[RMDB]
RNA sequence: GGGAACGACUCGAGUAGAGUCGAAAAGCCGGAAGGGCAAGGGUUCCACGGCAAUGUUCGUCAGCCGUGGGUGAGUCGGUCCUAAGGUGGCCCGUAACUCGGCGCCGCCGAAAAGGGAAGCCGGUUACAAUGUAGUACUCUUCGGAGUACUACAUUGAAAAGAAACAACAACAACAAC
Reactivity to DMS in 0.01 (KOAc 150mM, MgCl2 10mM, bicine 150mM(pH8.5), 24C), signal-to-noise 9, nucleotides 027 to 126: g000c020c010g000g010a100a110g000g000g000c170a100a110g000g000g000u010u010c010c000a010c000g000g010c010a080a080u030g000u010u020c110g000u010c080a170g010c010c000g020u000g000g020g010u020g010a030g010u000c030g000g000u000c000c010u000a130a150g010g030u000g000g000c000c000c010g010u020a240a110c290u020c010g010g010c210g020c030c010g010c000c000g000a010a040a110a150g000g000g000a130a130g000c010c010g000g000u010u020a170
Reactivity to 2A3 in 0.01 (KOAc 150mM, MgCl2 10mM, bicine 150mM(pH8.5), 24C), signal-to-noise 9, nucleotides 027 to 126: g010c010c000g020g040a050a050g050g020g020c100a050a070g060g010g010u120u050c000c010a000c000g010g000c090a090a070u070g030u110u180c160g130u130c100a160g280c080c000g000u010g000g000g010u060g000a020g020u020c020g010g020u040c000c010u040a090a040g010g000u010g010g000c000c000c000g010u060a080a060c070u020c100g030g000c140g010c020c010g000c010c000g010a030a050a010a000g020g010g010a040a010g040c000c000g000g010u010u000a030